[RMDB]
RNA sequence: GGGAACGACUCGAGUAGAGUCGAAAAACGCAUGGAUCUACGGAUCCAUGCGAAGGAUGUGCCUGCCUGGUGGCUUGUCCGAUUUGCACGGUGACUUGAUUACACUCUCUCAUUCAUGGUCACUUCCGAAGCGCUUUAGUGCCUUCCGUCCCUAAACCGCCAACAGCCAGAACGGCUUCUCCCCGCGGUUUGUCACUGAUCCGCAGGGCCCGGAAGGGCCUUCGUCUUACCCGGGAUCCACACGCCUCCGUGUACGCACGGAGGCGAAGGGCUAAUUCGUUAGCCCUAAAAGAAACAACAACAACAAC
Reactivity to 2A3 in 0.01 (KOAc 150mM, MgCl2 10mM, bicine 150mM(pH8.5), 24C), signal-to-noise 3, nucleotides 027 to 266: a000c020g020c000a000u000g010g000a010u000c010u050a040c280g110g000a000u000c000c010a000u000g000c010g000a000a000g020g000a030u050g040u050g030c010c030u040g020c010c030u070g060g020u030g030g020c000u040u120g050u030c020c000g030a100u060u030u250g130c080a050c080g040g000u010g010a020c010u050u060g040a050u160u230a060c080a050c050u150c000u040c030u020c080a070u140u000c040a050u160g050g010u020c000a030c040u090u010c010c040g040a040a020g040c040g040c130u150u190u290a120g060u120g080c000c000u060u030c040c070g060u070c000c000c000u030a040a050a040c020c010g020c030c020a060a040c020a110g010c000c000a100g080a220a070c100g060g000c030u080u020c080u070c000c010c010c030g000c020g010g010u010u010u060g030u030c030a020c080u080g040a060u070c040c040g020c070a040g020g000g000c040c050c040g070g060a090a080g030g000g020c020c040u030u080c060g030u000c030u060u050a090c000c000c030g030g040g010a050u110c100c030a070c010a020c120g010c020c000u010c030c010g010u010g030u040a040c150g020c090a000c000g000g000a000g010g000c000g010a000
Reactivity to DMS in 0.01 (KOAc 150mM, MgCl2 10mM, bicine 150mM(pH8.5), 24C), signal-to-noise 3, nucleotides 027 to 266: a140c010g000c000a000u010g010g000a020u010c000u010a110c200g030g000a000u000c000c000a010u000g010c000g020a020a020g010g010a030u000g000u000g000c020c020u010g010c130c040u010g000g010u000g000g000c030u000u000g020u000c030c030g010a150u020u030u000g010c120a080c140g010g010u010g000a030c020u020u010g000a040u010u010a130c190a140c080u010c040u000c080u000c090a070u010u000c060a030u000g000g000u000c020a050c030u010u000c140c090g000a060a080g020c110g010c070u000u010u010a070g010u010g000c020c040u000u010c040c060g000u000c010c030c040u010a010a030a030c020c010g020c030c150a090a060c150a090g000c030c020a150g030a160a300c150g010g010c010u000u010c070u000c020c020c050c210g000c020g000g010u010u000u010g000u010c100a070c130u010g000a030u010c090c020g010c070a070g020g000g040c090c080c010g020g060a120a150g020g010g020c010c060u000u000c040g010u000c080u000u010a090c090c020c020g020g000g000a070u000c040c220a090c170a220c030g000c000c000u000c020c040g030u000g020u010a080c210g010c020a020c000g000g000a010g000g020c020g010a000